About this RNA: Chemical mapping of a 177-nucleotide RNA with DMS and 2A3. It was measured as part of the RMDB library OK1LIB. Conditions: 150 mM KOAc, 10 mM MgCl2 and 150 mM bicine (pH 8.5), 24 C. Values cover nucleotides 27 to 126.
[RMDB]
RNA sequence: GGGAACGACUCGAGUAGAGUCGAAAAGUCCCUCACCUGCUUCCAGCCAAGGGGGCACUGGGUGGAGAUGGGGGGCAUGUUGGGUGUGUGAACCCUCGGGGCAGGGGAGGAGUCCAGGCUGGGGCACCCAAGGAAGAUAGUUCGCUAUCUUCCUUGGAAAAGAAACAACAACAACAAC
Reactivity to DMS in 0.01 (KOAc 150mM, MgCl2 10mM, bicine 150mM(pH8.5), 24C), signal-to-noise 3, nucleotides 027 to 126: g000u000c000c000c020u010c060a090c120c050u010g030c000u000u020c020c010a060g010c030c080a140a140g000g010g000g010g000c110a050c150u000g020g000g020u030g000g010a100g010a140u020g000g000g000g000g010g010c100a050u020g000u030u020g000g000g010u020g020u060g000u030g000a080a080c030c010c020u010c100g000g000g000g020c120a110g000g010g010g000a120g000g020a090g000u030c070c060a140g000g000c040u000g000g000g010g000c050a080c190
Reactivity to 2A3 in 0.01 (KOAc 150mM, MgCl2 10mM, bicine 150mM(pH8.5), 24C), signal-to-noise 6, nucleotides 027 to 126: g070u060c010c020c010u040c050a100c020c040u080g070c010u300u160c000c000a030g030c020c040a140a140g080g010g000g000g000c030a050c050u060g030g000g050u140g060g040a170g010a060u130g010g010g000g000g020g040c090a080u140g130u070u140g090g040g020u090g020u020g020u060g120a080a100c000c020c010u030c040g050g000g000g000c070a090g040g020g020g010a050g010g020a060g010u030c030c030a040g020g000c010u010g000g010g000g000c000a020c010